Annotation
Source: RMDB library 15KLIB, as collected in RNAgym. Structure probing data (2A3 and DMS) for a 170-nucleotide construct. DMS adducts were read by reverse transcription with MarathonRT. The 2A3 profile rests on 1,702 reads. The reactions ran in a buffer of 150 mM KOAc, 10 mM MgCl2 and 150 mM bicine (pH 8.5), at 24 C. For 2A3 the reverse transcriptase was SuperScript II with manganese. The DMS profile rests on 2,833 reads.
RNA sequence: GGGAACGACUCGAGUAGAGUCGAAAAGCGUUGUAAUUCCUGACUUCACCGUCUGGAAUCAGGUAGUCACAUAUCCCUCGCUUAACUACGCUGGGGCUUUGUGGGACAUUACAGUUAUAAACAAUGUGGAGAGGCGGGUUCGCCCGCCUCAAAAGAAACAACAACAACAAC
Reactivity to 2A3 in 0.01 (KOAc 150mM, MgCl2 10mM, bicine 150mM(pH8.5), 24C), signal-to-noise 2, nucleotides 027 to 129: g080c040g050u000u010g000u000a050a050u030u000c000c000u000g010a000c080u060u110c110a000c060c000g130u040c100u110g000g000a000a060u000c010a000g000g100u090a080g000u070c000a000c000a040u010a000u040c010c000c000u040c030g000c000u090u070a070a000c140u170a040c060g000c000u010g000g000g000g000c080u000u000u070g030u020g000g050g040a060c000a120u070u110a000c000a000g000u070u010a120u070a180a080a030c030a020a030u000g030u000g040g000a060
Reactivity to DMS in 0.01 (KOAc 150mM, MgCl2 10mM, bicine 150mM(pH8.5), 24C), signal-to-noise 2, nucleotides 027 to 129: g000c090g020u000u000g000u030a040a070u020u060c000c010u010g000a000c080u000u000c300a130c210c130g000u040c000u000g060g040a050a020u000c110a050g000g030u050a120g000u000c020a050c000a190u000a140u030c040c040c040u010c300g010c060u070u100a170a050c210u000a050c260g040c030u000g000g000g000g010c230u060u000u050g000u010g070g000g080a030c070a060u040u000a010c200a030g110u000u050a070u030a090a160a000c100a040a060u000g050u000g050g000a040